[RMDB]
Structure probing data (DMS and 2A3) for a 177-nucleotide construct. The 2A3 profile rests on 3,692 reads. Source: RMDB library OK2TST, as collected in RNAgym. 2A3 adducts were read by reverse transcription with SuperScript II with manganese. Reactivities are rounded to 0.1 and cut off at 0 and 3.
RNA sequence: GGGAACGACUCGAGUAGAGUCGAAAACAAUGCUCAUGUUAGCUGGCCUAUAUUACCUCUGGAGCUAAUUGUCACGCCUCUGAUUGGUACAUGAGCCCAUAAUCAUUGGAGGGAAGAAGCCUAAGCACUGAGAAUCUCAAUUCGUUGAGAUUCUCAGAAAAGAAACAACAACAACAAC
Reactivity to DMS in 0.01 (KOAc 150mM, MgCl2 10mM, bicine 150mM(pH8.5), 24C), signal-to-noise 4, nucleotides 027 to 126: c060a090a050u000g020c010u000c010a020u000g010u010u010a050g010c030u000g000g010c020c050u010a070u010a050u010u010a140c070c030u000c050u010g010g010a070g000c060u000a080a100u000u000g010u020c100a110c130g010c070c010u000c030u010g010a050u000u010g010g010u000a070c050a020u010g000a050g010c030c040c050a090u000a040a060u010c090a100u010u000g000g000a050g010g000g000a070a120g010a100a120g010c030c030u000a090a090g000c110a210
Reactivity to 2A3 in 0.01 (KOAc 150mM, MgCl2 10mM, bicine 150mM(pH8.5), 24C), signal-to-noise 2, nucleotides 027 to 126: c020a030a070u110g010c000u000c030a030u020g040u100u140a040g000c020u040g080g070c000c030u110a100u020a040u170u140a080c010c000u060c040u050g030g020a000g000c020u050a070a110u090u120g110u130c050a020c100g080c010c020u000c010u050g050a110u090u060g020g040u040a060c010a040u050g010a000g000c000c000c000a170u240a140a050u090c030a030u050u190g030g010a010g000g040g000a020a020g040a050a010g020c020c010u060a090a030g000c010a030